Structure probing data (DMS and 2A3) for a 177-nucleotide construct.
2A3 adducts were read by reverse transcription with SuperScript II with manganese.
The RNA was probed in 150 mM KOAc, 10 mM MgCl2 and 150 mM bicine (pH 8.5) at 24 C.
The 2A3 profile rests on 1,832 reads.
It was measured as part of the RMDB library OK1LIB.
RNA sequence: GGGAACGACUCGAGUAGAGUCGAAAAGAAAAGUAUCGAUAGCGAAAGAACUCUCUCUCUCGAAGAAGCUAUCGAUACGAACUCUCGAGAGAGAGAGGAAGAGAGAGAGAGGAAGAACUCUCGAAAAGGGAUUAGAUAUCUUCGGAUAUCUAAUCCCAAAAGAAACAACAACAACAAC
Reactivity to DMS in 0.01 (KOAc 150mM, MgCl2 10mM, bicine 150mM(pH8.5), 24C), signal-to-noise 2, nucleotides 027 to 126: g000a060a050a120a130g000u010a000u000c000g050a040u000a000g010c010g000a090a220a100g000a130a090c000u000c000u000c010u000c020u020c000u000c020g010a040a150g000a140a190g030c050u000a030u000c000g020a000u020a010c020g020a100a120c000u000c020u000c000g000a030g060a030g000a000g030a020g000a000g000g000a080a020g010a130g030a010g000a120g000a030g000a040g030g030a140a060g000a090a080c020u010c020u010c000g010a020a010a060a050
Reactivity to 2A3 in 0.01 (KOAc 150mM, MgCl2 10mM, bicine 150mM(pH8.5), 24C), signal-to-noise 2, nucleotides 027 to 126: g140a020a090a000a010g010u000a000u000c000g000a000u010a000g060c060g160a210a100a060g170a300a220c010u020c000u000c010u000c000u000c000u000c030g140a230a120g020a110a050g090c000u000a000u020c000g000a000u000a000c010g000a020a000c000u010c000u000c030g040a040g000a000g000a000g000a010g010a000g050g010a090a030g030a000g020a000g000a000g000a000g030a010g000g060a010a060g090a040a030c010u030c000u030c030g000a050a100a010a050